Description:
An RNA of 207 nucleotides, treated with 2A3 and DMS and read out base by base. The DMS profile rests on 2,656 reads. For DMS the reverse transcriptase was MarathonRT. 2A3 adducts were read by reverse transcription with SuperScript II with manganese. The reactions ran in a buffer of 150 mM KOAc, 10 mM MgCl2 and 150 mM bicine (pH 8.5), at 24 C.
RNA sequence: GGGAACGACUCGAGUAGAGUCGAAAAGAGACCCCAUUCGUGGGGUCUCAAAACCUUUGUGGACGUUAAUCGGCUGUGGGAUGCACCCAUUGGGUGCUAAUCCCACAGAACUACCGAGACGUCCACUCUGGUAAAUCAGCCUAGUUCGCUAGGCUGAACAAUGUACCGUGUUCGCACGGUACAUUGUAAAAGAAACAACAACAACAAC
Reactivity to 2A3 in 0.01 (KOAc 150mM, MgCl2 10mM, bicine 150mM(pH8.5), 24C), signal-to-noise 2, nucleotides 027 to 156: g000a000g000a000c010c000c000c000a020u050u120c120g160u030g010g010g010g010u000c000u010c000a010a000a000a000c000c000u000u000u000g000u010g010g000a000c010g000u020u050a300a140u110c000g010g000c000u010g000u000g020g000g000a020u070g000c010a030c030c020c090a300u200u300g030g000g000u000g010c000u000a010a050u000c000c000c000a000c000a000g000a000a000c000u040a060c010c000g000a010g000a000c000g000u010c000c000a000c000u010c000u000g030g000u060a030a090a130u030c010a000g000c000c000u020a000g010u050u070c200g000c100u000a010g010g000c000u000g000a000
Reactivity to DMS in 0.01 (KOAc 150mM, MgCl2 10mM, bicine 150mM(pH8.5), 24C), signal-to-noise 1, nucleotides 027 to 156: g000a030g010a040c000c010c010c000a070u010u000c140g020u010g000g060g060g020u000c000u000c000a000a070a210a070c010c000u000u000u010g000u020g010g000a020c000g040u000u000a040a210u000c040g020g030c020u020g040u000g010g030g050a090u010g000c030a020c020c000c020a300u000u010g050g010g080u000g000c030u000a050a050u000c010c020c020a010c010a010g010a070a140c090u010a210c000c010g000a090g000a010c000g000u000c000c010a000c000u000c000u000g000g040u000a040a140a170u000c010a010g030c020c010u000a020g020u010u000c300g040c010u000a020g000g100c010u000g010a050